[RMDB]
RNA sequence: GGGAACGACUCGAGUAGAGUCGAAAAGCGUGCCAUUUGUAGUAUCUUGUGGUUAUCACUACAAAGAAUUAGGUUUAGUCAUGAAUAUGGAUGUUAGUCUCCAUAGACAUAGGCUCUCUCUUAAGGAUCAGUGCCCUGUUCGCAGGGCACAAAAGAAACAACAACAACAAC
Reactivity to DMS in 0.01 (KOAc 150mM, MgCl2 10mM, bicine 150mM(pH8.5), 24C), signal-to-noise 2, nucleotides 027 to 129: g060c100g040u010g040c030c040a100u000u000u000g030u000a000g030u010a090u100c110u040u000g040u010g000g000u010u060a000u000c140a090c020u000a000c030a060a000a060g010a140a110u000u040a060g020g020u020u000u040a050g040u000c020a030u010g020a060a200u010a020u040g000g020a010u010g020u070u040a150g030u020c020u010c000c000a010u020a020g010a240c020a030u020a080g000g000c030u020c090u070c050u030c020u000u000a000a030g030g020a130u080c120a060
Reactivity to 2A3 in 0.01 (KOAc 150mM, MgCl2 10mM, bicine 150mM(pH8.5), 24C), signal-to-noise 5, nucleotides 027 to 129: g030c030g060u060g010c000c000a010u000u050u070g010u000a080g010u000a030u080c100u050u130g060u140g060g060u120u090a040u110c080a020c020u020a000c000a010a000a010g050a010a090u150u080a040g000g050u050u050u100a000g020u030c010a000u000g000a020a030u050a000u010g000g030a000u110g070u130u140a100g060u020c010u000c000c000a020u010a010g010a010c000a020u040a100g010g020c010u000c000u020c000u000c000u050u070a060a030g050g000a040u070c040a040